[RMDB]
RNA sequence: GGGAACGACUCGAGUAGAGUCGAAAACAGUGAUGGAAACAUCACUGAAAAACCGGAAACGGACAUGACGAUCCCGCGCAUGUCGGGAAACCGUAAACGCGAAAAGAGCUAGCGAAAGCUAGCUCAAGAUCACCCUAAUCUUCGGAUUAGGGUGAUCAAAAGAAACAACAACAACAAC
Reactivity to DMS in 0.01 (KOAc 150mM, MgCl2 10mM, bicine 150mM(pH8.5), 24C), signal-to-noise 1, nucleotides 027 to 126: c000a030g000u000g000a000u000g000g000a250a080a190c000a020u020c010a000c000u000g000a040a020a020a040a050c010c010g040g000a150a070a150c020g000g000a010c000a080u020g010a140c090g020a060u000c000c000c010g000c060g000c030a030u000g050u000c010g000g010g040a120a090a090c180c000g000u010a020a010a190c030g000c010g010a060a020a150a070g000a010g010c020u000a000g000c000g000a160a070a190g000c020u000a020g010c010u000c000a060a040
Reactivity to 2A3 in 0.01 (KOAc 150mM, MgCl2 10mM, bicine 150mM(pH8.5), 24C), signal-to-noise 3, nucleotides 027 to 126: c020a000g000u000g000a010u020g000g000a040a030a000c000a000u000c000a000c000u000g020a040a000a010a000a010c030c020g030g040a050a070a040c040g020g010a020c010a060u090g070a070c010g030a060u050c000c030c000g030c010g000c020a120u150g060u130c030g030g000g020a070a040a000c030c000g010u050a070a160a050c080g060c080g060a040a040a060a150g000a000g000c000u000a000g000c000g110a110a010a000g020c000u000a000g000c000u010c000a000a010
This 177-nucleotide RNA was probed chemically with DMS and 2A3. It was measured as part of the RMDB library OK1LIB. The reactions ran in a buffer of 150 mM KOAc, 10 mM MgCl2 and 150 mM bicine (pH 8.5), at 24 C.